The record gives the reactivity of an RNA of 177 nucleotides to 2A3 and DMS. For DMS the reverse transcriptase was MarathonRT. It was measured as part of the RMDB library M2PK50. The DMS profile rests on 631 reads. For 2A3, 962 sequencing reads were counted.
RNA sequence: GGGAACGACUCGAGUAGAGUCGAAAACUCGAAUCUUUCGAGAUUCGAGACUGUCGAAGUGUCAAUAAGAUCGAAAAGAUCGCCGAGCAUAAAAUAGACACAAUGCUGCUUGAUUCGUCAAGCAGAAGUCAGGACGUAGGUUCGCCUACGUCCUGACAAAAGAAACAACAACAACAAC
Reactivity to 2A3 in 0.01 (KOAc 150mM, MgCl2 10mM, bicine 150mM(pH8.5), 24C), signal-to-noise 1, nucleotides 027 to 126: c000u020c000g010a010a020u000c020u000u130u150c200g080a030g000a010u000u010c000g000a000g030a070c060u070g020u130c050g020a210a020g000u010g000u020c030a000a060u100a230a070g000a010u010c020g070a020a140a160a120g030a010u000c000g010c040c040g110a080g050c020a040u150a140a140a090a020u120a070g010a000c030a000c020a040a050u180g020c000u000g020c000u000u000g020a010u030u020c200g010u010c080a000a000g000c000a000g030a000a030
Reactivity to DMS in 0.01 (KOAc 150mM, MgCl2 10mM, bicine 150mM(pH8.5), 24C), signal-to-noise 1, nucleotides 027 to 126: c010u000c000g020a020a010u000c000u000u000u000c280g000a020g000a010u000u000c000g000a010g000a070c120u000g030u020c050g000a050a130g010u010g020u000c030a140a210u020a070a180g030a020u000c040g000a160a040a110a200g020a010u000c020g010c150c040g000a100g010c150a100u020a090a010a070a040u000a120g010a020c000a070c040a070a130u010g000c000u000g030c000u000u000g000a020u000u040c110g040u000c060a000a010g000c000a000g000a050a090